About this RNA
An RNA of 170 nucleotides, treated with DMS and 2A3 and read out base by base. The data come from the RNA Mapping Database (RMDB), library 15KLIB. For 2A3 the reverse transcriptase was SuperScript II with manganese. The RNA was probed in 150 mM KOAc, 10 mM MgCl2 and 150 mM bicine (pH 8.5) at 24 C.
RNA sequence: GGGAACGACUCGAGUAGAGUCGAAAAUUAAUAAAGUAAAACGUGCUUUUGCAGAUUACACCCAGUGUGCUGUAAUUGCUGUUGUUGCUGCUGUUCUUAAUAGCUUGUGCAUCUGCUUUGUUACCUCGGGACCUUCCGUUCGCGGAAGGUAAAAGAAACAACAACAACAAC
Reactivity to DMS in 0.01 (KOAc 150mM, MgCl2 10mM, bicine 150mM(pH8.5), 24C), signal-to-noise 4, nucleotides 027 to 129: u020u060a090a140u040a110a080a070g020u040a100a080a140a060c120g000u020g010c030u010u020u000u010g020c010a040g000a100u030u040a040c040a090c050c040c050a100g010u020g000u020g030c030u020g020u020a020a030u010u030g040c070u020g030u000u080g000u040u020g020c020u010g050c000u070g020u000u000c080u020u010a020a030u000a080g030c000u000u000g040u020g020c060a000u030c050u020g030c060u000u000u000g030u020u010a100c000c010u020c110g000g030g000
Reactivity to 2A3 in 0.01 (KOAc 150mM, MgCl2 10mM, bicine 150mM(pH8.5), 24C), signal-to-noise 3, nucleotides 027 to 129: u090u100a000a100u210a040a110a060g100u020a140a180a070a040c100g140u140g040c000u010u030u000u000g000c010a020g060a090u240u100a010c000a000c030c270c080a040g060u040g000u010g120c020u000g000u000a000a000u010u000g040c030u000g010u000u000g000u030u010g000c030u000g020c030u050g070u080u010c070u010u080a080a040u050a060g060c060u080u100g020u010g090c000a000u010c020u010g130c000u020u060u000g030u020u080a140c000c030u000c000g010g080g090